[RMDB]
This 177-nucleotide RNA was probed chemically with 2A3 and DMS. Conditions: 150 mM KOAc, 10 mM MgCl2 and 150 mM bicine (pH 8.5), 24 C.

RNA sequence: GGGAACGACUCGAGUAGAGUCGAAAAGGAGGCGAUCGCGGCGCACCAGCUGCCGAGCGCAGACCCCAGGCCAGACCCAGAGCCCAAGACGCACUUCCCGGUGGAAAACACAUCGUGCGCGCUCGGGACAACUAUCGCAGUUCGCUGCGAUAGUUGUAAAAGAAACAACAACAACAAC
Reactivity to 2A3 in 0.01 (KOAc 150mM, MgCl2 10mM, bicine 150mM(pH8.5), 24C), signal-to-noise 3, nucleotides 027 to 126: g090g010a030g050g000c030g030a040u060c030g000c040g030g000c020g000c040a130c060c020a040g040c020u050g030c050c010g030a030g010c030g000c010a010g090a180c040c000c000c010a010g070g000c020c020a040g010a100c000c020c010a040g010a030g040c030c030c000a020a020g040a040c020g000c010a030c010u050u020c020c010c000g000g020u040g000g060a120a090a120a010c080a020c000a050u100c080g030u040g030c020g000c020g010c010u030c010g000g010g020
Reactivity to DMS in 0.01 (KOAc 150mM, MgCl2 10mM, bicine 150mM(pH8.5), 24C), signal-to-noise 4, nucleotides 027 to 126: g000g020a100g000g020c030g050a070u020c020g010c060g020g000c040g010c090a110c090c100a140g020c050u030g000c050c030g000a040g010c030g020c030a080g000a110c010c010c030c080a120g010g000c020c030a080g000a090c020c010c030a110g000a170g010c000c040c020a070a090g000a110c070g010c040a020c020u010u000c030c020c010g000g000u020g000g000a110a080a060a050c110a040c020a070u040c070g000u000g000c050g000c080g020c040u000c050g010g000g000